[RMDB]
RNA sequence: GGGAACGACUCGAGUAGAGUCGAAAAGUUUAGUCGUUCUGGAAUCAAACUUGUCAAAGUGAGGCACUGUGAUUUGAACUUGGCAAUAAAGCUGCCUUCCAACAAGAAAGAAAACAUGUUAUGCACUCUGUAUAACAAGGAGAUGGAACUGCUGAAGACUAGACGUUGUCUUCGGACAACGUCUAGUAAAAGAAACAACAACAACAAC
Reactivity to 2A3 in 0.01 (KOAc 150mM, MgCl2 10mM, bicine 150mM(pH8.5), 24C), signal-to-noise 1, nucleotides 027 to 156: g040u040u160u180a020g000u000c100g020u000u000c020u070g090g190a020a120u240c020a150a180a120c080u020u080g000u050c020a110a110a170g020u140g010a040g000g000c000a010c120u000g050u080g240a220u120u030u130g020a090a050c040u030u060g120g040c010a080a000u110a070a070a040g040c040u000g000c000c000u030u100c050c000a020a020c000a150a040g100a110a090a000g030a000a090a080a060c010a000u100g000u050u000a020u050g030c020a050c270u110c200u080g000u000a000u010a020a000c000a000a010g000g010a110g040a040u140g070g000a010a050c080u080g040c000u000g020a020a000g020

Conditions: 150 mM KOAc, 10 mM MgCl2 and 150 mM bicine (pH 8.5), 24 C. Chemical mapping of a 207-nucleotide RNA with 2A3. The data come from the RNA Mapping Database (RMDB), library OK3TST. Values cover nucleotides 27 to 156.